[RMDB]
RNA sequence: GGGAACGACUCGAGUAGAGUCGAAAAGUCAACUUCUCUUUUGAGCAUAUUUAAAGGUGGUCCGACUAAAUGUACCAUAUAAAUAUCAGAACAGUUCUCCUCACCUGGCAGUGCUUGAUGAACGAAAACCGUAUGUCACGUUCGCGUGACAUACGGUAAAAGAAACAACAACAACAAC
Reactivity to DMS in 0.01 (KOAc 150mM, MgCl2 10mM, bicine 150mM(pH8.5), 24C), signal-to-noise 1, nucleotides 027 to 126: g060u000c090a170a060c040u000u000c010u000c000u000u040u000u000g040a110g030c160a110u000a030u000u000u010a070a080a050g000g010u000g000g000u020c060c060g040a120c050u000a060a100a070u020g010u010a070c000c030a080u000a060u000a040a010a090u010a040u000c070a130g000a050a150c080a060g010u000u000c040u000c030c040u000c040a130c070c000u000g000g030c090a050g010u000g010c030u000u000g010a040u000g000a070a060c080g000a040a070a050
Chemical mapping of a 177-nucleotide RNA with DMS.
The RNA was probed in 150 mM KOAc, 10 mM MgCl2 and 150 mM bicine (pH 8.5) at 24 C.
Values cover nucleotides 27 to 126.